[RMDB]
RNA sequence: GGGAACGACUCGAGUAGAGUCGAAAAAACCCCCUUUUCACUUUGCCAAUUGGACUUAUGUCUUUAUUGAUCAUUCAAGUGAGCAAAGGAAAUACGCUUUAAAAACUCAGGCAAACGGUGUUUGUCUUCUAUGAUAAUCCUUCGGGAUUAUCAUAGAAAAAGAAACAACAACAACAAC
Reactivity to DMS in 0.01 (KOAc 150mM, MgCl2 10mM, bicine 150mM(pH8.5), 24C), signal-to-noise 2, nucleotides 027 to 126: a070a080c050c000c000c000c050u020u000u010u010c010a170c000u000u000u000g000c040c010a030a060u000u010g000g010a030c160u010u010a080u010g000u000c000u000u000u020a140u030u020g000a010u000c160a190u000u000c050a000a020g020u000g010a180g010c030a000a000a010g010g000a010a030a030u010a060c210g000c150u000u020u000a080a090a090a080a130c110u020c140a050g020g010c010a010a010a020c000g020g010u000g010u000u000u000g010u000c000u010
Reactivity to 2A3 in 0.01 (KOAc 150mM, MgCl2 10mM, bicine 150mM(pH8.5), 24C), signal-to-noise 2, nucleotides 027 to 126: a000a000c020c000c000c000c020u060u000u000u000c160a190c110u010u000u050g010c030c000a030a070u000u030g050g030a010c000u150u170a090u300g010u010c000u030u210u080a190u220u070g030a040u040c030a010u010u120c060a060a010g020u000g060a020g010c030a000a020a000g010g020a000a010a000u080a020c080g000c040u130u180u110a170a130a040a030a010c040u020c040a010g000g070c020a010a000a030c120g280g020u100g010u030u010u000g000u030c000u060